[RMDB]
RNA sequence: GGGAACGACUCGAGUAGAGUCGAAAAGAUAUGGAAUUAAGGGAGUAACGUGUCGGAAACGACACGUUUACGAGGAUCUUAUUCCUAAGUCAAAAGAUGAGCACUUUCUUCGGAAAGUGCUCAUCAAGAACUAUAAUAUCUUCGGAUAUUAUAGUUCAAAAGAAACAACAACAACAAC
Reactivity to 2A3 in 0.01 (KOAc 150mM, MgCl2 10mM, bicine 150mM(pH8.5), 24C), signal-to-noise 2, nucleotides 027 to 126: g010a000u060a050u110g020g010a010a030u170u080a140a040g040g010g010a010g000u010a020a000c000g000u000g010u000c010g010g030a050a030a010c020g000a010c000a000c040g000u000u020u010a000c010g010a110g000g010a010u010c010u010u000a000u020u030c000c000u020a160a020g050u040c030a030a040a080a110g000a000u020g010a000g010c020a000c000u000u050u000c020u070u180c300g020g020a000a000a000g000u000g020c000u010c040a010u000c000a000a000
Reactivity to DMS in 0.01 (KOAc 150mM, MgCl2 10mM, bicine 150mM(pH8.5), 24C), signal-to-noise 3, nucleotides 027 to 126: g000a020u010a300u000g000g010a020a010u000u010a010a000g000g000g000a040g020u000a020a010c000g020u000g020u000c000g010g000a070a050a130c010g010a010c000a010c000g010u000u000u000a000c010g000a140g000g010a050u010c000u000u000a050u000u000c000c000u000a050a140g000u000c030a080a080a100a150g000a010u000g010a020g000c000a010c000u000u000u000c000u000u020c260g020g010a010a000a010g010u000g020c000u000c000a010u000c000a040a060